The record gives the reactivity of an RNA of 207 nucleotides to 2A3 and DMS. The data come from the RNA Mapping Database (RMDB), library OK3TST. Values cover nucleotides 27 to 156.

[RMDB]
RNA sequence: GGGAACGACUCGAGUAGAGUCGAAAAUGGCGCCUUUACUAUCUUCUACAUGGGUAUCAACUUAGGUGCGGCGCUUUCUGGUUUUGUCGUUGCCUGGGCCUAUACCAACUUUGGCCAUAAAGAAGUCAUCGAUGGUGUUGAAACUACCAUCAACAACUAAUACCCAAGCAUUCGUGCUUGGGUAUUAAAAAGAAACAACAACAACAAC
Reactivity to 2A3 in 0.01 (KOAc 150mM, MgCl2 10mM, bicine 150mM(pH8.5), 24C), signal-to-noise 2, nucleotides 027 to 156: u040g000g000c000g050c030c000u100u080u060a140c040u100a130u130c030u110u070c090u250a240c100a210u150g030g000g030u060a050u180c050a060a120c040u070u090a030g000g000u000g040c000g000g010c020g030c030u020u140u020c070u060g020g030u100u050u060u170g010u030c010g080u110u200g070c000c000u020g000g070g000c000c000u060a070u030a080c000c030a040a120c040u110u090u060g020g000c000c000a040u100a020a120a030g050a010a020g010u070c030a080u080c150g020a010u010g000g010u000g010u080u070g040a140a080a050c050u040a010c050c000a000u040c020a000a000c040a010a000c010
Reactivity to DMS in 0.01 (KOAc 150mM, MgCl2 10mM, bicine 150mM(pH8.5), 24C), signal-to-noise 2, nucleotides 027 to 156: u000g030g040c030g000c030c010u000u000u020a100c040u000a030u010c020u000u010c020u000a110c090a250u000g020g030g050u000a030u000c020a070a070c040u010u010a010g000g000u000g000c230g020g020c010g020c040u000u020u000c080u000g040g010u000u000u000u040g020u000c000g010u000u000g020c000c020u000g010g000g000c070c020u000a140u010a190c080c050a030a070c080u000u000u000g030g040c010c030a120u000a060a080a220g010a140a050g000u000c020a090u010c120g000a050u010g030g010u000g000u000u000g010a150a050a120c100u000a070c010c000a090u000c010a070a070c080a050a090c070